This 207-nucleotide RNA was probed chemically with DMS and 2A3.
RNA sequence: GGGAACGACUCGAGUAGAGUCGAAAAAUAUGUCAUUAAUUUUGGCCAAUAAUUCAUAUCUUUGUCUACGAUCAAUCGCGAUAAGUGUAUUUACAUAAACAGAUGUAUAAUCAGUUGAAAUGUUUUGUAUAGAUUGUAGAUAUUUUAAUCCGAUGUCCGUAGACGGACUAUUCGUAGUCCGUCUACGAAAAGAAACAACAACAACAAC
Reactivity to DMS in 0.01 (KOAc 150mM, MgCl2 10mM, bicine 150mM(pH8.5), 24C), signal-to-noise 1, nucleotides 027 to 156: a100u000a040u000g000u030c010a060u000u000a080a150u000u020u010u020g020g000c060c070a120a120u000a050a140u010u010c100a050u000a100u000c080u010u000u010g010u000c000u000a010c010g030a090u000c050a100a130u010c080g030c030g030a080u010a050a100g000u010g010u000a080u000u000u000a030c030a060u010a050a050a130c010a090g010a070u000g010u000a090u000a080a070u000c010a170g000u030u010g010a110a030a180u030g000u000u000u000u000g020u000a100u000a120g000a100u000u030g000u010a000g000a100u000a040u000u000u020u000a060a070u000c080c040g010a090u000g000u000c020
Reactivity to 2A3 in 0.01 (KOAc 150mM, MgCl2 10mM, bicine 150mM(pH8.5), 24C), signal-to-noise 2, nucleotides 027 to 156: a000u120a040u050g020u020c020a040u010u200a170a120u020u130u020u110g060g000c000c020a070a070u180a130a130u170u120c140a070u040a110u220c070u060u070u060g000u030c000u010a010c000g000a000u000c000a080a040u050c090g060c060g090a210u080a230a060g020u030g040u090a070u070u090u000a000c010a010u180a030a160a000c020a010g060a040u070g080u010a070u070a250a100u160c070a070g070u140u160g070a070a110a090u030g020u000u020u040u020g040u000a030u020a040g010a010u000u000g000u000a010g000a000u010a010u040u130u000u050a050a080u000c010c030g060a020u050g130u100c010
Values are in units of 0.01, from 0 to 300, in steps of 10. The DMS profile rests on 1,975 reads. The reactions ran in a buffer of 150 mM KOAc, 10 mM MgCl2 and 150 mM bicine (pH 8.5), at 24 C.